[RMDB]
RNA sequence: GGGAACGACUCGAGUAGAGUCGAAAAGUGUGAAGUGAGGCUCCCCCUUACGAGCACGAAUUACAUGGGAGUGUUAACAUUACUGGGCGCCAGGAGCCCUACCUGGACAAGUAGCGAAGUACAGCCCGUGUAUGAGCUACGACUAAUUACGGGCACACCAUCGGUGGUAGUUCGCUACCACCGAUGGAAAAGAAACAACAACAACAAC
Reactivity to 2A3 in 0.01 (KOAc 150mM, MgCl2 10mM, bicine 150mM(pH8.5), 24C), signal-to-noise 1, nucleotides 027 to 156: g000u010g010u010g040a040a030g000u000g030a000g010g000c000u060c000c050c000c000c030u000u040a030c000g010a020g000c010a000c010g030a040a060u160u050a150c110a060u150g000g010g000a040g000u020g130u210u120a240a020c030a090u060u100a120c030u010g000g150g000c070g000c000c000a000g010g000a030g070c000c050c000u020a000c010c000u000g010g010a010c020a120a030g030u020a000g060c000g080a170a020g040u010a010c010a030g000c000c000c040g030u020g000u000a020u110g080a000g060c030u050a000c040g070a020c000u090a160a030u110u020a050c000g000g000g040c030a000c000a000
An RNA of 207 nucleotides, treated with 2A3 and read out base by base. The data come from the RNA Mapping Database (RMDB), library OK3TST.